[RMDB]
RNA sequence: GGGAACGACUCGAGUAGAGUCGAAAAGAGGAAAUAGUGUCUGGGAGCGCGCGGAGUAAACAUAUAUGGUUCAUAUAUAACCGUAGGCACGUAAAGAAAGCGAGUAAGGCAGAGAGAACUGCCAGAAAGCACUAGUACUCUUCGGAGUACUAGUGCUAAAAGAAACAACAACAACAAC
Reactivity to 2A3 in 0.01 (KOAc 150mM, MgCl2 10mM, bicine 150mM(pH8.5), 24C), signal-to-noise 3, nucleotides 027 to 126: g080a030g040g110a080a040a040u140a050g050u010g010u050c010u070g040g030g120a090g060c010g010c010g020c000g020g000a050g050u170a040a130a000c060a010u070a000u040a010u090g300g000u190u180c060a000u040a010u060a010u000a060a070c020c020g000u000a000g060g000c010a010c030g000u030a000a000a140g140a040a040a000g050c040g030a040g020u090a050a120g000g000c000a000g020a000g010a000g020a040a060c020u000g000c010c000a000g000a020a060
Reactivity to DMS in 0.01 (KOAc 150mM, MgCl2 10mM, bicine 150mM(pH8.5), 24C), signal-to-noise 2, nucleotides 027 to 126: g000a130g000g000a070a060a080u020a110g000u010g010u000c040u010g030g000g020a080g000c060g030c180g000c030g000g000a050g000u010a160a070a180c160a080u010a070u000a010u000g000g030u010u070c080a040u000a020u000a030u010a160a100c030c020g000u000a050g000g000c050a030c040g020u010a060a050a130g040a060a070a050g000c040g030a080g000u000a040a070g020g040c000a050g000a040g000a150g000a070a100c000u000g000c020c000a090g000a050a130